The data come from the RNA Mapping Database (RMDB), libraries RFM100 and RFMREP. An RNA of 177 nucleotides, treated with 2A3 and DMS and read out base by base.
RNA sequence: GGGAACGACUCGAGUAGAGUCGAAAAAGUCCGUGUACGCACGGACAAUUCAGAGAUUGCCUCUGUCAUUACCUACAUUAAGUAUGCAAUGGGAAUGCAAUCGUUGAAGAUCCUGUACGCAGGAUCAUAGGACAUAUACGUUCGCGUAUAUGUCCUAAAAAGAAACAACAACAACAAC
Reactivity to 2A3 in 0.01 (KOAc 150mM, MgCl2 10mM, bicine 150mM(pH8.5), 24C), signal-to-noise 8, nucleotides 027 to 126: a000g010u000c010c070g000u000g010u010a070c250g000c100a000c000g010g000a000c000a000a040u060u030c020a020g070a000g000a180u000u000g000c000c000u000c000u010g000u010c000a000u000u010a040c010c020u020a010c020a080u290u290a220a100g000u010a020u020g010c020a010a000u010g000g010g040a300a020u090g000c000a010a000u000c030g050u060u100g040a080a050g010a010u000c000c000u010g020u040a020c300g000c050a000g000g000a000u000c000a000
Reactivity to DMS in 0.01 (KOAc 150mM, MgCl2 10mM, bicine 150mM(pH8.5), 24C), signal-to-noise 5, nucleotides 027 to 126: a110g000u000c000c000g030u000g010u010a100c200g030c000a010c000g010g000a000c020a020a030u010u000c030a070g010a100g000a010u000u000g000c000c010u010c010u000g010u000c000a010u000u000a050c010c040u000a000c010a170u030u020a150a190g010u000a000u010g000c040a010a010u000g000g000g000a210a000u010g010c000a010a000u000c010g010u020u010g010a060a090g000a010u000c000c010u000g000u000a130c180g020c020a010g000g000a000u010c000a100
DMS adducts were read by reverse transcription with MarathonRT.